Record summary
Structure probing data (DMS) for a 177-nucleotide construct.
RNA sequence: GGGAACGACUCGAGUAGAGUCGAAAAGUUGUGAUGGAUAAACUUGAUGGUUCCAUUAUUAGUACUUUUAUGGAUGUUGAUUAUGAAGUACGCACUAAAUCACAUGCAUCACUGAAUUCAGAUCAUGCUUGAAGACUGCUUUCGAGCAGUCUUCAAGAAAAGAAACAACAACAACAAC
Reactivity to DMS in 0.01 (KOAc 150mM, MgCl2 10mM, bicine 150mM(pH8.5), 24C), signal-to-noise 1, nucleotides 027 to 126: g020u000u020g010u000g020a070u000g000g020a070u020a050a110a100c050u000u000g010a110u000g030g040u010u000c010c010a050u000u000a060u000u000a050g000u000a070c030u010u030u000u000a040u000g000g000a070u000g000u010u020g000a010u000u000a120u000g010a060a080g050u000a130c210g040c250a030c070u000a070a020a020u000c040a030c030a020u010g010c020a020u000c060a030c110u000g000a030a090u000u010c130a040g000a060u000c090a080u010g010